[RMDB]
Source: RMDB library M2RFPK, as collected in RNAgym. Chemical mapping of a 207-nucleotide RNA with 2A3 and DMS. The DMS profile rests on 2,060 reads.
RNA sequence: GGGAACGACUCGAGUAGAGUCGAAAACUUAUGAAUCUAACCCCUAUACUUGUAUAGGCGAUUAAUAAAUCUUCUGUAAAUGCUGUAAGAGGAUUACCCCUUGAGGUUUCAGCACUAGGCUGCACUAUAAAGUCGGGAUGGUUCGCCAUCCCGACAAGUAUCGAACUUAGUUCGCUAAGUUCGAUACAAAAGAAACAACAACAACAAC
Reactivity to 2A3 in 0.01 (KOAc 150mM, MgCl2 10mM, bicine 150mM(pH8.5), 24C), signal-to-noise 3, nucleotides 027 to 156: c040u210u170a110u300g100a110a070u060c060u070a070a090c000c010c000c010u020a020u010a070c050u090u160g040u110a040u010a030g000g010c040g040a060u070u170a090a120u160a100a080a030u020c000u060u020c010u040g150u160a090a100a150u090g050c030u020g070u090a040a010g010a010g010g010a010u010u050a050c010c000c000c030u000u060g040a110g120g010u050u050u130c040a020g010c010a010c030u050a060g160g000c030u030g040c060a040c070u050a040u030a200a140a010g000u000c000g030g010g000a000u000g000g000u030u050c110g000c050c000a000u010c000c000c000g000a000c000a000a000
Reactivity to DMS in 0.01 (KOAc 150mM, MgCl2 10mM, bicine 150mM(pH8.5), 24C), signal-to-noise 1, nucleotides 027 to 156: c040u010u010a060u020g000a120a070u030c030u010a120a130c080c050c010c020u000a040u000a070c050u000u020g030u010a040u000a010g010g030c060g070a070u000u020a030a050u000a120a080a040u000c010u000u000c020u010g020u010a090a090a090u000g020c010u000g040u020a120a080g000a050g000g000a070u010u000a090c080c000c000c080u020u030g010a090g000g040u000u000u000c000a060g000c030a050c050u010a170g010g020c000u000g030c050a140c090u000a130u000a050a130a180g000u010c010g020g020g000a010u000g010g000u010u020c300g000c040c010a060u000c000c010c000g000a000c000a000a040